This 177-nucleotide RNA was probed chemically with 2A3 and DMS. For DMS the reverse transcriptase was MarathonRT.
RNA sequence: GGGAACGACUCGAGUAGAGUCGAAAAGUCAGAGCCUGCGCCACUUUGGUGGGUGGGUGAUGGCGUGCCUUUUGAAGAAUGAGCCUGCGAGUUAGCGGCAUGUCGCGAGGUUAACCCGUGUGGGGUAUCGUGUUAAUAUGUUCGCAUAUUAACACGAAAAAGAAACAACAACAACAAC
Reactivity to 2A3 in 0.01 (KOAc 150mM, MgCl2 10mM, bicine 150mM(pH8.5), 24C), signal-to-noise 4, nucleotides 027 to 126: g000u000c010a010g000a000g000c000c010u030g000c140g300c000c010a020c030u160u120u300g180g000u020g000g000g010u020g010g000g000u030g000a030u010g000g000c000g000u020g010c000c000u060u090u080u170g150a130a070g040a060a060u140g010a020g070c010c040u060g000c070g040a090g100u090u130a020g030c030g020g010c020a010u110g060u040c030g000c020g050a030g010g040u040u100a060a060c000c010c040g040u110g090u130g080g030g010g010u040a060
Reactivity to DMS in 0.01 (KOAc 150mM, MgCl2 10mM, bicine 150mM(pH8.5), 24C), signal-to-noise 8, nucleotides 027 to 126: g010u000c010a020g010a300g000c000c000u000g000c010g010c000c000a010c020u000u020u020g030g020u000g010g000g030u000g000g000g020u000g000a200u000g010g000c000g010u000g010c000c010u000u000u000u000g010a080a110g010a090a080u000g010a150g010c020c010u000g020c020g000a130g010u000u000a070g020c020g000g010c020a050u010g000u000c060g010c050g000a050g010g010u000u000a090a090c010c000c010g000u010g020u010g010g000g010g020u000a140